Annotation
The record gives the reactivity of an RNA of 177 nucleotides to 2A3 and DMS. Conditions: 150 mM KOAc, 10 mM MgCl2 and 150 mM bicine (pH 8.5), 24 C.
RNA sequence: GGGAACGACUCGAGUAGAGUCGAAAAGAGUCCGUUCGGCCCCCGAGAUCCCCGCGUGGGGAUCAGCUCGCAGCACAACGGCGCUGACCUGAUCGGGUUCGAGGACGUUCACGCCGUCGAGGCCGGCCCAACGCAAUGUAUUCGUACAUUGCGUUGGAAAAGAAACAACAACAACAAC
Reactivity to 2A3 in 0.01 (KOAc 150mM, MgCl2 10mM, bicine 150mM(pH8.5), 24C), signal-to-noise 2, nucleotides 027 to 126: g020a030g070u040c130c030g000u040u060c050g130g010c010c010c000c000c010g030a030g000a050u020c000c010c030c000g170c110g140u300g010g000g000g000a010u010c000a010g000c010u050c040g120c060a030g030c010a020c010a100a080c080g110g000c040g010c100u040g030a090c000c040u050g050a140u100c040g000g070g110u090u130c030g000a030g080g060a020c020g000u020u050c060a030c070g000c000c030g090u100c020g060a090g080g000c010c010g000g000c000
Reactivity to DMS in 0.01 (KOAc 150mM, MgCl2 10mM, bicine 150mM(pH8.5), 24C), signal-to-noise 4, nucleotides 027 to 126: g010a080g010u000c050c050g000u010u000c080g000g010c020c040c030c050c030g010a200g010a040u000c000c000c010c010g020c300g000u010g010g010g030g000a000u000c030a050g010c050u000c070g000c160a070g000c090a100c080a110a060c050g000g000c030g020c120u000g010a060c070c010u010g000a150u000c040g010g000g010u010u010c020g010a020g000g000a130c130g010u000u000c040a100c060g000c040c010g010u000c040g000a140g000g000c040c020g000g000c090
DMS (dimethyl sulfate) methylates the pairing face of unpaired adenines and cytosines.